[RMDB]
RNA sequence: GGGAACGACUCGAGUAGAGUCGAAAAGUUUACAUGUUACAAUUAAACAUUCUUCACGUGAGAAUUGUUUACAAAUUGUCUCUAAACACAUGUGAAUCACAGGCCUCAGUUAUCUAAACGAAAUCUGCUCACUCUCAUAGUUCGCUAUGAGAGUGAGAAAAGAAACAACAACAACAAC
Reactivity to 2A3 in 0.01 (KOAc 150mM, MgCl2 10mM, bicine 150mM(pH8.5), 24C), signal-to-noise 9, nucleotides 027 to 126: g010u010u020u010a000c010a010u010g010u010u020a000c000a000a000u030u030a020a000a000c000a000u010u000c000u050u040c040a120c300g160u300g040a010g020a010a010u210u140g020u010u020u020a060c080a010a120a020u000u000g010u000c040u010c060u300a030a090a010c040a000c000a030u000g000u000g020a010a010u090c040a040c030a120g120g030c000c020u070c040a030g020u050u060a110u090c100u170a080a080a060c050g040a040a040a090u020c010u050g010
Reactivity to DMS in 0.01 (KOAc 150mM, MgCl2 10mM, bicine 150mM(pH8.5), 24C), signal-to-noise 3, nucleotides 027 to 126: g020u000u000u000a020c010a030u000g010u000u000a010c010a000a030u010u000a010a030a010c000a060u000u000c000u000u000c030a260c300g020u070g010a010g000a020a000u010u010g030u010u010u010a080c300a300a050a050u000u000g000u000c110u080c160u030a070a010a050c080a000c010a000u000g010u000g000a030a000u010c050a090c150a130g020g030c030c010u000c040a050g000u010u010a120u030c070u030a100a050a070c100g020a060a050a080u000c010u000g010